[RMDB]
RNA sequence: GGGAACGACUCGAGUAGAGUCGAAAACUAUGUGACCCGAAACUUCAAAGUAUGCAUAAUUGGCACAGUAUCUAAGUUUCAACAAGGUGACACUCUCCUAUUCCUUGGGCCUAUGGAAGGUGGUGGACAAAGAGUUGUUCUUCGGAACAACUCUUUGAAAAGAAACAACAACAACAAC
Reactivity to 2A3 in 0.01 (KOAc 150mM, MgCl2 10mM, bicine 150mM(pH8.5), 24C), signal-to-noise 1, nucleotides 027 to 126: c020u040a080u190g050u040g060a080c000c000c050g030a050a060a030c000u050u050c090a150a140a040g070u100a110u110g000c000a010u010a200a120u270u070g030g000c040a020c040a100g140u140a070u070c020u030a070a070g000u040u100u090c060a090a110c030a150a040g020g030u040g020a020c020a000c060u070c000u040c020c000u030a070u080u000c010c020u010u060g040g040g020c000c020u110a070u130g050g040a030a030g020g010u070g020g020u020g060g000a010
Reactivity to DMS in 0.01 (KOAc 150mM, MgCl2 10mM, bicine 150mM(pH8.5), 24C), signal-to-noise 2, nucleotides 027 to 126: c110u010a020u000g000u020g030a130c010c010c060g030a060a060a050c050u000u040c190a090a110a120g000u020a050u000g000c020a090u010a100a170u010u010g010g030c020a030c050a070g010u000a080u020c070u000a040a030g050u000u000u000c020a070a080c100a070a080g000g000u000g000a070c060a050c090u020c040u000c010c010u000a120u000u000c030c010u000u010g030g000g020c050c070u010a070u010g000g020a060a040g000g010u000g010g010u000g020g050a180